[RMDB]
RNA sequence: GGGAACGACUCGAGUAGAGUCGAAAAAGCCAUCUGGAAUUCGAUGUCGACACCGUCGAUGGUGUGGAUCUCGCCGGUGCUGGUGAUGUCGAUCGUCGGCACGAUCAACCCGACCUCACCCAGGGAAGUGACCAGGCUAUUUCGAUAGCCUGGUCACAAAAGAAACAACAACAACAAC
Reactivity to 2A3 in 0.01 (KOAc 150mM, MgCl2 10mM, bicine 150mM(pH8.5), 24C), signal-to-noise 2, nucleotides 027 to 126: a040g080c010c000a050u060c070u100g020g100a100a040u180u040c040g040a060u090g000u030c000g050a000c000a000c040c000g140u240c080g030a210u250g020g070u110g060u040g170g000a040u000c000u020c060g000c010c040g050g000u050g010c000u060g030g090u040g040a040u060g110u090c040g010a040u000c010g030u040c010g080g020c070a000c030g040a070u080c010a100a070c030c020c000g040a060c020c000u010c000a040c000c000c000a060g040g040g000a130a000